[RMDB]
RNA sequence: GGGAACGACUCGAGUAGAGUCGAAAAGCAUCAGGUGGGCCUCUCACCCGAGGGGGACUUCUCAUCGUUACUUCUGCACUGUUCUAGAGGGAUUUCAACAAUGAGGUGGUUAGGAGCAGGGGCCGGAGUGCCGUUUUAAAUUCGUUUAAAACGGCACAAAAGAAACAACAACAACAAC
Reactivity to 2A3 in 0.01 (KOAc 150mM, MgCl2 10mM, bicine 150mM(pH8.5), 24C), signal-to-noise 2, nucleotides 027 to 126: g030c010a060u080c100a020g030g070u050g050g020g030c000c020u020c000u000c020a100c000c030c010g020a110g010g000g000g010g030a000c020u100u020c010u010c020a020u030c030g030u020u050a000c000u030u040c000u050g110c060a050c110u110g100u300u070c100u170a040g020a060g130g070g000a080u080u190u150c100a060a030c030a060a060u070g000a030g060g070u160g050g020u090u130a040g020g000a050g000c050a020g000g020g000g010c000c030g020g010a060
Reactivity to DMS in 0.01 (KOAc 150mM, MgCl2 10mM, bicine 150mM(pH8.5), 24C), signal-to-noise 4, nucleotides 027 to 126: g010c100a090u010c080a090g010g020u000g000g010g020c020c020u010c010u000c050a140c120c080c100g020a090g000g000g000g000g000a070c060u000u020c020u000c020a030u010c050g010u000u000a070c030u000u000c010u010g010c070a120c050u000g000u000u020c120u010a060g010a120g010g010g000a070u000u000u000c140a050a050c060a050a040u010g000a030g020g010u010g000g000u000u000a080g010g010a130g010c110a060g010g000g000g010c020c060g010g000a160